[RMDB]
RNA sequence: GGGAACGACUCGAGUAGAGUCGAAAAGAUGGCGGUGUCGUGACUGCCGGGUCUGCAGUGAUCGGCUACGCCGAUACCGGCAUCAACAAUCCUGAGACAGAUCUGGUCGUUACAGGCGCGGGAUCCAUCCUAGGGUAGUAUUCGUACUACCCUAGGAAAAAGAAACAACAACAACAAC
Reactivity to DMS in 0.01 (KOAc 150mM, MgCl2 10mM, bicine 150mM(pH8.5), 24C), signal-to-noise 6, nucleotides 027 to 126: g000a030u000g010g000c020g010g020u000g020u000c020g010u000g020a090c070u000g010c010c000g020g020g000u000c010u000g040c270a150g020u010g020a020u000c010g000g000c010u000a070c300g000c050c000g000a020u000a010c020c010g010g000c000a010u000c000a070a110c200a120a100u000c020c000u000g020a120g000a130c150a100g000a050u000c030u000g010g020u000c070g010u000u010a070c170a110g010g010c030g010c060g000g000g000a060u000c030c100a180
Reactivity to 2A3 in 0.01 (KOAc 150mM, MgCl2 10mM, bicine 150mM(pH8.5), 24C), signal-to-noise 3, nucleotides 027 to 126: g000a010u040g010g230c040g000g000u010g000u010c020g040u070g030a130c020u020g000c000c000g030g040g030u000c030u070g130c160a230g100u030g190a020u030c020g000g000c010u060a030c200g010c010c000g020a000u020a010c020c000g050g020c000a010u020c010a010a030c020a010a070u030c000c000u060g000a040g050a060c040a010g020a040u050c020u090g000g040u070c030g020u040u090a040c100a130g090g000c040g000c020g150g030g020a030u010c010c020a040
The record gives the reactivity of an RNA of 177 nucleotides to DMS and 2A3. The DMS profile rests on 7,045 reads. DMS adducts were read by reverse transcription with MarathonRT.